[RMDB]
RNA sequence: GGGAACGACUCGAGUAGAGUCGAAAAGGCGCACCCUGGACGAAGCUCGUGCUGCUGCCCGCGCGCGCGGACAAGACGCCGGUCGAGGGCGGGUCGCUUCCGUUGCGUCGGGUCGGGUGGCCGGACGGACAUUACCCAUCUUCGGAUGGGUAAUGUCAAAAGAAACAACAACAACAAC
Reactivity to DMS in 0.01 (KOAc 150mM, MgCl2 10mM, bicine 150mM(pH8.5), 24C), signal-to-noise 3, nucleotides 027 to 126: g000g020c020g000c020a040c010c000c010u020g010g000a100c120g000a070a070g010c000u010c060g020u020g000c030u000g000c040u010g000c010c030c000g020c240g020c020g040c020g030c010g010g010a040c290a130a110g020a060c030g000c010c000g000g000u010c100g010a130g000g000g020c000g000g020g010u010c200g030c190u000u000c000c000g020u040u030g020c000g010u000c040g000g010g000u010c140g000g010g020u000g010g000c000c020g000g000a100c100g000
Reactivity to 2A3 in 0.01 (KOAc 150mM, MgCl2 10mM, bicine 150mM(pH8.5), 24C), signal-to-noise 5, nucleotides 027 to 126: g050g000c060g060c150a020c020c040c040u090g050g030a050c050g060a060a000g030c030u030c050g150u200g020c040u040g000c000u020g000c000c000c010g000c020g000c000g000c000g010c010g000g010a030c030a090a060g040a020c100g050c080c000g030g040u140c070g040a160g050g140g030c020g020g010g000u040c020g000c010u040u010c010c000g040u060u300g010c010g000u030c040g010g010g060u060c020g030g000g000u050g000g000c020c010g000g000a010c040g070
The record gives the reactivity of an RNA of 177 nucleotides to DMS and 2A3. The reactions ran in a buffer of 150 mM KOAc, 10 mM MgCl2 and 150 mM bicine (pH 8.5), at 24 C. 2A3 adducts were read by reverse transcription with SuperScript II with manganese. For DMS, 7,272 sequencing reads were counted. Values cover nucleotides 27 to 126. The 2A3 profile rests on 4,722 reads. Source: RMDB library OK1LIB, as collected in RNAgym.